[RMDB]
The record gives the reactivity of an RNA of 177 nucleotides to DMS and 2A3. 2A3 is a SHAPE reagent: it acylates the 2'-hydroxyl of flexible nucleotides of all four kinds. The data come from the RNA Mapping Database (RMDB), library OK2TRN. The reactions ran in a buffer of 150 mM KOAc, 10 mM MgCl2 and 150 mM bicine (pH 8.5), at 24 C.
RNA sequence: GGGAACGACUCGAGUAGAGUCGAAAAUAGAGGUAGGCAUACAUCUAGCAAACAGACAUUGAAAGUCAGGCUGUUACCCCUGGUACCACAUCUUGCUUCGUAGGGAAUUUGUCUAUACCUAUGUUAGAUUUUAAAGCAGUUUCGACUGCUUUAAAAUAAAAGAAACAACAACAACAAC
Reactivity to DMS in 0.01 (KOAc 150mM, MgCl2 10mM, bicine 150mM(pH8.5), 24C), signal-to-noise 9, nucleotides 027 to 126: u000a050g010a050g010g020u000a030g010g010c050a060u000a070c110a080u000c060u000a060g010c070a050a060a110c100a050g010a040c050a080u000u010g010a110a110a110g000u000c070a060g010g010c060u000g010u000u000a110c080c070c030c050u000g010g010u000a110c070c050a060c130a060u000c050u000u000g000c070u000u000c040g010u000a030g000g000g010a060a080u000u000u010g000u010c040u000a060u000a120c010c000u000a020u000g010u010u000a070g010
Reactivity to 2A3 in 0.01 (KOAc 150mM, MgCl2 10mM, bicine 150mM(pH8.5), 24C), signal-to-noise 3, nucleotides 027 to 126: u100a000g040a020g010g030u020a020g000g060c020a010u040a080c020a060u090c040u060a000g040c070a040a050a060c040a030g060a030c020a050u100u200g110a150a030a000g030u060c010a000g060g000c020u030g070u170u110a080c020c010c010c010u020g040g030u040a060c000c020a030c010a100u030c020u030u070g040c010u070u060c030g030u020a020g000g030g030a050a060u070u050u010g020u000c020u010a050u010a090c000c000u010a000u000g020u030u020a090g000